RNA sequence: GGGAACGACUCGAGUAGAGUCGAAAAGAUAUGGAUGGCGUAGACAUGACCUGUCGGAAACGACUGGUCAACAGCUACGCCAUCCUAAGUCAAAACGCUUGUACACUCUUCGGAGUGUACAAGCGAAGUCAUUAAUACAGUUCGCUGUAUUAAUGACAAAAGAAACAACAACAACAAC
Reactivity to 2A3 in 0.01 (KOAc 150mM, MgCl2 10mM, bicine 150mM(pH8.5), 24C), signal-to-noise 4, nucleotides 027 to 126: g010a010u020a010u070g000g000a000u000g000g000c000g020u000a010g120a300c150a250u020g000a010c010c010u010g000u010c010g020g000a030a020a000c010g000a010c010u020g000g000u010c000a000a010c020a000g010c000u010a000c010g000c010c000a000u010c000c000u000a000a000g010u000c010a000a010a050a120c020g000c000u000u000g000u000a000c000a010c010u010c000u060u100c300g150g000a000g000u000g000u000a000c000a000a010g000c000g000a000a000
Reactivity to DMS in 0.01 (KOAc 150mM, MgCl2 10mM, bicine 150mM(pH8.5), 24C), signal-to-noise 5, nucleotides 027 to 126: g000a040u000a180u010g000g000a010u000g010g010c000g000u000a010g000a120c140a220u000g010a010c000c000u000g000u000c000g010g000a040a040a090c000g010a010c000u000g000g010u000c000a010a050c300a130g010c000u000a010c000g000c000c000a000u000c000c000u000a010a040g000u010c010a100a100a120a210c020g000c000u000u000g010u000a010c000a010c010u010c000u000u010c190g020g000a010g020u000g000u000a000c000a000a000g000c000g010a010a030